[RMDB]
RNA sequence: GGGAACGACUCGAGUAGAGUCGAAAAGAUAUGGAGGCAAGCGAUGAGUACGGGUCGGAAACGACCCAGUACGAGCUUGCUCCUAAGUCAAAACGUAGUAACAUCAGUUCGCUGAUGUUACUACGAAGAAGGAUCGGUAGUUCGCUACCGAUCCUUCAAAAGAAACAACAACAACAAC
Reactivity to DMS in 0.01 (KOAc 150mM, MgCl2 10mM, bicine 150mM(pH8.5), 24C), signal-to-noise 2, nucleotides 027 to 126: g010a020u000a300u010g000g000a050g030g010c000a000a020g010c000g000a120u010g000a290g000u000a010c010g000g000g020u000c000g000g010a080a040a230c010g000a010c000c030c010a000g030u000a000c000g020a100g010c000u000u000g000c000u000c000c000u000a020a140g010u000c050a090a070a130a250c020g000u000a010g010u000a010a000c000a000u010c000a020g020u000u010c280g000c000u000g000a010u000g010u000u000a000c000u000a010c010g000a030a040
Reactivity to 2A3 in 0.01 (KOAc 150mM, MgCl2 10mM, bicine 150mM(pH8.5), 24C), signal-to-noise 2, nucleotides 027 to 126: g050a010u100a050u150g020g020a060g140g300c000a000a000g000c030g240a300u210g100a150g060u010a000c000g010g000g020u000c000g000g040a060a080a000c020g010a000c000c000c050a020g010u010a000c010g020a010g000c000u010u000g020c000u020c000c010u000a050a030g050u040c040a030a040a070a100c010g000u010a000g010u010a000a000c000a010u010c000a000g050u070u120c170g000c200u000g000a000u000g000u000u000a000c000u010a000c030g000a000a000